[RMDB]
An RNA of 177 nucleotides, treated with 2A3 and DMS and read out base by base. For DMS, 4,039 sequencing reads were counted. High DMS reactivity at an A or C suggests that its Watson-Crick edge is free. Reactivities are rounded to 0.1 and cut off at 0 and 3.

RNA sequence: GGGAACGACUCGAGUAGAGUCGAAAAGCUACACUCUUCGGAGUGUAGCAAACCCGAUGAAGCGGCACUUACGGAGCUUCAUACAUCUAAGAGUGCAAAUUAAAAUCGGCGACUUCGGUCGCCGAAACACAAUAUAAUGCUUCGGCAUUAUAUUGUGAAAAGAAACAACAACAACAAC
Reactivity to 2A3 in 0.01 (KOAc 150mM, MgCl2 10mM, bicine 150mM(pH8.5), 24C), signal-to-noise 6, nucleotides 027 to 126: g000c010u000a000c010a000c000u010c000u040u060c170g150g000a010g000u000g000u000a000g000c010a000a000a000c000c000c010g010a080u080g010a030a010g040c070g070g000c060a010c040u070u140a040c180g110g080a030g020c010u060u030c020a020u090a050c050a070u060c060u160a120a060g020a020g080u020g000c030a030a050a110u190u150a080a100a040a140u030c010g000g010c000g010a010c010u040u050c220g070g010u000c000g000c000c000g000a000a000a000
Reactivity to DMS in 0.01 (KOAc 150mM, MgCl2 10mM, bicine 150mM(pH8.5), 24C), signal-to-noise 4, nucleotides 027 to 126: g000c000u000a000c010a010c000u000c000u010u020c180g040g000a010g000u000g010u000a010g010c000a000a080a080c000c000c010g010a060u010g010a030a040g020c040g030g030c020a020c030u000u010a300c190g000g010a220g010c070u000u000c070a050u010a110c160a050u010c100u010a060a120g000a040g020u000g010c020a110a100a120u000u020a030a050a120a120u000c000g000g000c000g010a010c000u000u010c190g030g000u000c000g020c000c000g000a000a030a050